[RMDB]
RNA sequence: GGGAACGACUCGAGUAGAGUCGAAAAUCGAAAAUAGGUGUUAAUACUUGGGUAAUGGCUUGUUGGAUUACACGAUCAGUAACGGUUGGAAUACCCAGCUGACGAGUGCCGCCAUCUGGUUUAGCUAUCGCUGGAAGAAUUUCGAUUCUUCCAGCGAAAAAGAAACAACAACAACAAC
Reactivity to DMS in 0.01 (KOAc 150mM, MgCl2 10mM, bicine 150mM(pH8.5), 24C), signal-to-noise 1, nucleotides 027 to 126: u000c040g000a100a030a130a060u010a070g010g010u020g000u000u000a040a110u010a070c040u000u040g030g010g000u020a070a050u000g010g010c050u000u020g020u010u000g010g020a080u010u010a030c130a110c010g000a120u010c030a040g010u000a040a130c260g000g030u010u030g020g000a110a100u000a040c040c030c050a290g000c020u010g000a040c050g010a080g010u010g040c060c040g060c050c020a020u010c060u000g030g000u010u000u010a110g010c100u000a070